This 177-nucleotide RNA was probed chemically with DMS and 2A3. DMS adducts were read by reverse transcription with MarathonRT.

[RMDB]
RNA sequence: GGGAACGACUCGAGUAGAGUCGAAAAAGAAUGGAGGCAGUAGGAAUAAACGUCAGUAUCAGCCGCAAAGCUUGACUUUGUCAUGGCCUCUGUGGGCCAUAUUGCCCACAUCAGAGACUGUGGGAUCCUCUCUCCAAGCUUUCGAGCUUGGAGAGAGAAAAGAAACAACAACAACAAC
Reactivity to DMS in 0.01 (KOAc 150mM, MgCl2 10mM, bicine 150mM(pH8.5), 24C), signal-to-noise 1, nucleotides 027 to 126: a070g000a070a120u000g030g090a140g000g020c020a090g000u020a060g020g000a120a030u000a070a080a110c090g000u000c040a020g020u000a040u010c140a110g010c060c030g010c110a070a110a110g000c010u000u010g010a040c060u010u000u000g020u010c070a060u020g000g000c010c020u010c080u000g000u020g000g000g000c040c200a010u000a010u020u000g000c000c000c000a010c010a080u000c060a120g010a220g000a030c140u000g010u010g010g020g000a110u000c120
Reactivity to 2A3 in 0.01 (KOAc 150mM, MgCl2 10mM, bicine 150mM(pH8.5), 24C), signal-to-noise 1, nucleotides 027 to 126: a020g130a000a010u070g050g000a000g060g000c010a010g010u140a000g020g140a040a040u090a100a160a050c130g040u000c040a000g040u060a070u110c010a000g010c010c010g030c040a010a030a000g010c000u090u090g100a160c070u020u100u080g060u110c020a060u100g030g040c030c000u020c030u000g060u100g000g000g000c060c020a060u080a120u090u270g040c000c040c000a010c000a000u060c000a020g060a040g040a150c060u050g020u060g010g030g090a020u030c000